An RNA of 177 nucleotides, treated with DMS and 2A3 and read out base by base. Values cover nucleotides 27 to 126. The RNA was probed in 150 mM KOAc, 10 mM MgCl2 and 150 mM bicine (pH 8.5) at 24 C. For 2A3, 125,409 sequencing reads were counted. 2A3 adducts were read by reverse transcription with SuperScript II with manganese. For DMS, 173,739 sequencing reads were counted.

RNA sequence: GGGAACGACUCGAGUAGAGUCGAAAAGUGAUGUGCGACAGUUUACUGGAGGCUGCUUUGCGGUCGAGUCGUAUGACUGUACCUGAGGCCGGAUAGGUACUCGGCCAUAUGCGACGAGCACAUCUGAGGCUUCGUCGGUGUUCGCAUCGAUGAGGCCAAAAGAAACAACAACAACAAC
Reactivity to DMS in 0.01 (KOAc 150mM, MgCl2 10mM, bicine 150mM(pH8.5), 24C), signal-to-noise 9, nucleotides 027 to 126: g020u020g000a010u000g010u000g000c000g000a190c020a030g000u010u020u010a070c030u010g010g010a210g000g010c000u000g000c010u030u020u050g010c010g010g010u000c000g000a190g010u000c030g020u000a020u010g000a060c170u010g000u010a060c130c000u020g010a090g010g000c010c010g000g020a150u050a070g010g020u010a060c020u010c040g000g000c300c020a040u020a040u010g000c020g010a030c030g000a160g000c000a000c010a010u000c000u000g000a190
Reactivity to 2A3 in 0.01 (KOAc 150mM, MgCl2 10mM, bicine 150mM(pH8.5), 24C), signal-to-noise 9, nucleotides 027 to 126: g180u080g000a010u010g000u000g010c010g040a020c040a030g030u080u160u170a140c040u040g040g020a030g020g010c010u010g000c050u100u160u300g010c010g000g000u000c010g020a030g010u010c000g000u020a030u060g070a040c070u040g020u120a130c000c030u080g020a020g020g000c010c030g060g090a180u190a170g040g030u140a300c010u010c030g010g010c000c010a040u050a010u080g020c020g010a010c010g010a020g000c000a000c000a000u000c010u010g030a030